An RNA of 207 nucleotides, treated with 2A3 and read out base by base. Source: RMDB library OK3TST, as collected in RNAgym. The 2A3 profile rests on 415 reads. The reactions ran in a buffer of 150 mM KOAc, 10 mM MgCl2 and 150 mM bicine (pH 8.5), at 24 C. As a SHAPE reagent, 2A3 marks flexible, mostly unpaired nucleotides at the ribose 2'-OH.

RNA sequence: GGGAACGACUCGAGUAGAGUCGAAAAGAAUUAAAAUUAGGUUCAAGUUAUGAAGAUUUACAAGUAGAUAAUCUUAUUGCAGCACAACUUACUGGCACAAUACAAACUGCUACACAACCCAACAUUACAUCUUUAGGUACGCUUACUGGAUUAACAAGACGAGGUAAACUUUCGAGUUUACCUCGUCAAAAGAAACAACAACAACAAC
Reactivity to 2A3 in 0.01 (KOAc 150mM, MgCl2 10mM, bicine 150mM(pH8.5), 24C), signal-to-noise 1, nucleotides 027 to 156: g030a000a000u120u110a000a070a040a070u000u220a080g000g050u060u050c050a000a080g010u140u180a010u190g070a070a000g010a030u060u060u090a060c110a100a020g040u030a010g080a130u270a050a000u050c040u030u060a050u030u080g030c110a110g000c000a030c000a230a060c040u110u070a030c000u080g030g010c030a010c050a130a000u010a010c040a000a180a030c030u030g000c010u140a000c080a000c000a030a080c020c000c040a050a000c030a120u170u090a000c000a040u000c000u000u240u000a000g000g020u050a010c010g020c080u170u000a040c080u140g050g000a090u170u240a010a030c100a070a000